Annotation:
This 207-nucleotide RNA was probed chemically with 2A3. It was measured as part of the RMDB library M2RFPK.
RNA sequence: GGGAACGACUCGAGUAGAGUCGAAAAGCUGAAAAUGAUUUAUGGGUAGUGGAAUAGGUUAACCGUAAGACCUUUGGUUGAAAAACUAUGAAAUUAAGACUCAGAUAUUUUAUCUUUGGUUACGGGAAAAAUCAUUUACCGUUCGCGGUAAAUGAAACAUCAAGUAGCACUUCGGUGCUACUUGAUGAAAAGAAACAACAACAACAAC
Reactivity to 2A3 in 0.01 (KOAc 150mM, MgCl2 10mM, bicine 150mM(pH8.5), 24C), signal-to-noise 1, nucleotides 027 to 156: g000c030u070g030a080a060a060a080u100g060a070u060u130u250a090u160g050g000g000u070a060g030u020g060g000a060a160u070a070g010g000u000u010a000a100c020c010g010u010a020a020g000a020c000c010u030u070u020g000g000u000u050g000a020a050a000a000a050c080u050a090u050g010a030a040a100u090u120a180a000g010a010c050u040c030a000g020a080u090a070u050u180u110u020a060u080c000u040u040u010g030g010u000u000a000c000g000g020g080a000a020a000a300a000u020c000a020u000u000u000a000c000c000g060u030u080c220g000c020g060g000u000a000a000a000u000g000a020a020a000